An RNA of 177 nucleotides, treated with 2A3 and DMS and read out base by base. The 2A3 profile rests on 126,266 reads. Source: RMDB library OK1LIB, as collected in RNAgym. DMS adducts were read by reverse transcription with MarathonRT. 2A3 adducts were read by reverse transcription with SuperScript II with manganese. High DMS reactivity at an A or C suggests that its Watson-Crick edge is free.

RNA sequence: GGGAACGACUCGAGUAGAGUCGAAAAGCUAGCCUGCGCACGAUCUGACUGCCGUGAAGUCUAGCCUGCGUCAGAACUAGUCUCCAUCAAUCAAAGCGCAGGGAUUGAUGUACGAGACUCGUACACAGUGUAAGGUGUUGUUCGCAGCACUUUACACAAAAGAAACAACAACAACAAC
Reactivity to 2A3 in 0.01 (KOAc 150mM, MgCl2 10mM, bicine 150mM(pH8.5), 24C), signal-to-noise 9, nucleotides 027 to 126: g030c020u030a010g010c000c000u010g000c010g000c010a040c050g050a080u050c030u080g090a060c030u060g040c020c010g040u040g080a080a010g060u010c020u030a020g010c000c020u050g030c020g100u090c060a030g020a090a030c020u010a010g000u000c000u000c000c000a010u000c000a000a010u010c010a030a050a050g020c010g000c020a010g020g000g000a000u000u010g000a000u000g020u050a060c060g000a000g010a010c010u000c000g020u040a050c080a020c030a070
Reactivity to DMS in 0.01 (KOAc 150mM, MgCl2 10mM, bicine 150mM(pH8.5), 24C), signal-to-noise 9, nucleotides 027 to 126: g000c030u010a040g010c030c010u000g010c020g030c020a160c120g010a070u020c050u010g000a050c040u010g010c050c030g010u020g000a080a090g000u010c030u000a070g010c030c030u000g000c070g010u010c070a080g010a080a070c060u010a030g000u000c000u000c000c010a020u000c010a010a010u000c010a050a070a100g000c030g010c010a020g000g000g010a020u000u000g000a020u000g000u060a080c160g010a030g010a030c030u000c060g000u010a070c110a090c160a100